[RMDB]
RNA sequence: GGGAACGACUCGAGUAGAGUCGAAAAGACCCUGUUUUUCAGGGUAAGAAGGGGUAGAGAAAAUGCCUCGAGCCAAUGUUCGAGUACCAGGCGCUACGGCGCUGAAGUAACCGAUGCCAUACUCCCAGGAAAAGCUCGAACGACCUUCAACAAAAGGCAAGAUUAAACGGUUCGCCGUUUAAUCUUGAAAAGAAACAACAACAACAAC
Reactivity to DMS in 0.01 (KOAc 150mM, MgCl2 10mM, bicine 150mM(pH8.5), 24C), signal-to-noise 2, nucleotides 027 to 156: g000a060c000c000c010u030g010u000u000u010u000u010c000a010g000g010g040u000a030a050g000a080a080g020g020g030g000u000a180g000a180g030a030a080a060a090u000g000c060c000u000c030g000a050g010c000c050a110a180u000g050u010u010c050g010a020g020u010a050c020c030a300g010g010c010g030c070u010a140c260g080g000c000g030c020u000g000a050a110g010u000a040a030c030c000g010a100u010g030c060c010a190u000a060c020u000c000c030c020a170g030g000a080a120a070a120g030c020u000c040g010a080a060c030g000a060c030c000u020u000c050a060a120c120a010a040a100a060g020g000
Reactivity to 2A3 in 0.01 (KOAc 150mM, MgCl2 10mM, bicine 150mM(pH8.5), 24C), signal-to-noise 4, nucleotides 027 to 156: g040a010c000c000c000u010g050u010u290u020u090u190c020a020g010g000g000u060a040a060g050a030a060g000g050g000g030u110a030g030a020g040a180a110a060a060u070g040c010c010u020c000g010a030g000c040c050a080a090u160g010u010u020c000g010a020g020u020a030c020c030a030g010g000c000g000c010u050a040c200g110g000c000g000c010u020g010a070a000g020u030a060a050c030c000g030a020u110g000c010c000a040u040a140c050u040c050c010c010a000g110g010a020a100a030a040g010c000u000c010g020a020a020c010g020a060c000c000u030u030c060a110a050c020a070a150a040a010g050g010

This 207-nucleotide RNA was probed chemically with DMS and 2A3. Source: RMDB library PDB130, as collected in RNAgym. For 2A3, 2,584 sequencing reads were counted. The RNA was probed in 150 mM KOAc, 10 mM MgCl2 and 150 mM bicine (pH 8.5) at 24 C. The DMS profile rests on 2,142 reads. High 2A3 reactivity points to a flexible backbone, as in loops and unpaired stretches.